[RMDB]
RNA sequence: GGGAACGACUCGAGUAGAGUCGAAAAGAAAACCGCGGUUGGCUAGCGGAAAGAAAGAGGGUUAAAGCCAACGAAAUAAGCCGGAAAGAACAACCGGCAAGAAAAGCCCUACAAAGAAGAAAGAAAACACUGCAUACGUAUUCGUACGUAUGCAGUGAAAAGAAACAACAACAACAAC
Reactivity to 2A3 in 0.01 (KOAc 150mM, MgCl2 10mM, bicine 150mM(pH8.5), 24C), signal-to-noise 2, nucleotides 027 to 126: g100a000a070a010a010c010c000g000c000g040g000u000u020g050g000c100u140a000g000c000g070g000a050a040a010g190a010a070a040g080a010g020g030g000u060u030a090a000a000g010c000c000a010a000c020g070a030a090a240u260a080a020g000c000c000g000g040a110a150a110g230a210a000c020a050a000c000c010g000g030c000a020a000g000a000a020a000a000g000c010c000c000u000a060c030a000a060a000g090a100a000g060a040a050a090g090a010a000a000a010
Reactivity to DMS in 0.01 (KOAc 150mM, MgCl2 10mM, bicine 150mM(pH8.5), 24C), signal-to-noise 3, nucleotides 027 to 126: g000a160a050a040a140c000c020g000c000g050g000u010u020g000g000c000u020a050g010c020g000g030a030a110a140g000a080a170a130g030a030g000g000g000u000u020a030a070a020g000c000c010a000a010c000g010a230a130a130u000a130a140g000c000c000g000g000a070a090a190g030a150a140c220a080a120c010c010g020g000c000a030a030g000a090a020a100a240g020c000c000c010u000a060c180a120a050a140g010a040a120g000a100a030a130g000a130a050a050a110